An RNA of 177 nucleotides, treated with DMS and read out base by base. DMS adducts were read by reverse transcription with MarathonRT. For DMS, 755 sequencing reads were counted. The RNA was probed in 150 mM KOAc, 10 mM MgCl2 and 150 mM bicine (pH 8.5) at 24 C.
RNA sequence: GGGAACGACUCGAGUAGAGUCGAAAAUGGCGGUGUAAUUCAGGCUGCAGUCCAGUAGAUGGUGCCGAAGAGUAAGAUACAGCAGAUUUAUUUAGGCUCUGUUCACUUUCAUCGAGCCACCAGAGAACUCAUGGGUGAGGUUCGCCUCACCCAUGAGAAAAGAAACAACAACAACAAC
Reactivity to DMS in 0.01 (KOAc 150mM, MgCl2 10mM, bicine 150mM(pH8.5), 24C), signal-to-noise 1, nucleotides 027 to 126: u010g000g030c050g030g050u000g020u010a130a180u020u010c100a150g030g010c010u000g000c060a090g020u010c020c030a110g010u030a050g030a150u010g010g000u000g050c020c020g000a070a060g000a050g020u000a020a100g010a090u000a090c090a050g020c110a040g000a110u000u010u000a090u020u010u020a120g010g020c020u000c040u000g020u000u010c100a090c030u000u000u000c100a110u000c050g000a290g000c070c000a060c090c040a070g010a190g000a070a120